[RMDB]
RNA sequence: GGGAACGACUCGAGUAGAGUCGAAAACUUAUCCGGUUUUAACGAUGUUUUAUUGGCGCAAAGGUUUACGGAUAAACAACUAAUAAUUAAACCUUUUGUGUGCGAAACGUGGUUGUUUAACGUACUCACUGCCCCCAGGGAUUCGUCCCUGGGGGAACAUUGCAAUAUCUUUCGAGAUAUUGCAAUGAAAAGAAACAACAACAACAAC
Reactivity to 2A3 in 0.01 (KOAc 150mM, MgCl2 10mM, bicine 150mM(pH8.5), 24C), signal-to-noise 3, nucleotides 027 to 156: c010u020u020a020u010c020c010g030g050u020u030u060u110a120a050c050g040a050u080g080u040u100u020u050a140u170u170g100g000c000g000c000a000a010a000g000g000u000u000u020a000c000g000g010a010u030a030a100a000c030a020a040c030u170a060a100u140a250a030u140u110a020a020a020c000c000u010u020u100u120g050u020g020u050g050c020g030a060a020a020c040g010u060g040g000u070u010g020u000u030u040a090a040c050g020u060a060c040u030c120a060c080u080g020c000c000c010c010c010a000g000g000g000a010u040u050c110g060u050c040c010c000u000g000g000g010g010g000a000a000
Reactivity to DMS in 0.01 (KOAc 150mM, MgCl2 10mM, bicine 150mM(pH8.5), 24C), signal-to-noise 1, nucleotides 027 to 156: c070u010u000a000u000c030c010g010g010u020u000u010u000a050a090c130g000a130u000g010u000u000u000u000a110u050u000g010g000c190g050c010a030a080a030g040g010u000u000u000a100c000g020g000a110u010a020a040a130c070a080a140c120u010a060a110u000a070a110u000u010a020a020a010c010c000u010u000u000u010g030u000g050u000g020c070g000a080a030a010c020g030u000g020g010u000u000g010u010u010u020a050a090c100g000u000a110c050u000c080a090c070u000g000c000c000c000c000c010a000g000g030g000a080u010u000c300g000u000c020c000c000u000g030g000g000g000g000a000a030

Conditions: 150 mM KOAc, 10 mM MgCl2 and 150 mM bicine (pH 8.5), 24 C. Chemical mapping of a 207-nucleotide RNA with 2A3 and DMS. It was measured as part of the RMDB library M2RFPK. For 2A3, 1,688 sequencing reads were counted. For DMS, 2,653 sequencing reads were counted. For 2A3 the reverse transcriptase was SuperScript II with manganese.